Source information:
An RNA of 177 nucleotides, treated with 2A3 and DMS and read out base by base. For 2A3, 5,257 sequencing reads were counted. Source: RMDB library TTRDEL, as collected in RNAgym. For DMS, 2,200 sequencing reads were counted. 2A3 adducts were read by reverse transcription with SuperScript II with manganese.

RNA sequence: GGGAACGACUCGAGUAGAGUCGAAAAGAUAUGGACGCGGAGCCAUGGCAAGGCCAUGGAUCGGAAACGAUCCAAGGCUGAUGACCCAUGGAACCUGUCCUAAGUCAAACGCGAGUUCGCUCGCGAACAGAGUCAAUCAGUUCGCUGAUUGACUCUGAAAAGAAACAACAACAACAAC
Reactivity to 2A3 in 0.01 (KOAc 150mM, MgCl2 10mM, bicine 150mM(pH8.5), 24C), signal-to-noise 2, nucleotides 027 to 126: g020a020u070a040u140g010g010a010c040g050c300g170g020a020g060c000c000a010u020g020g000c060a160a280g020g000c020c000a030u020g010g000a000u010c020g000g030a050a080a050c020g000a000u000c000c020a000a020g020g000c000u010g040a120u110g010a030c000c020c000a000u000g000g000a020a050c010c010u000g000u020c010c000u040a130a040g060u020c060a100a070a140c020g000c000g010a000g010u060u100c210g070c180u000c000g000c000g000a040a010
Reactivity to DMS in 0.01 (KOAc 150mM, MgCl2 10mM, bicine 150mM(pH8.5), 24C), signal-to-noise 3, nucleotides 027 to 126: g010a040u000a300u000g000g000a010c010g020c200g010g000a080g070c000c000a010u010g000g010c040a100a080g010g010c000c000a130u010g000g000a010u000c000g010g000a060a100a200c010g020a010u010c000c000a010a050g010g000c000u000g000a060u000g010a090c300c000c000a010u000g010g010a020a010c000c000u030g030u000c000c000u010a030a060g010u000c030a060a060a150c020g000c010g010a030g010u000u000c210g040c000u000c030g000c010g000a080a170
Reactivities are given for positions 27 through 126.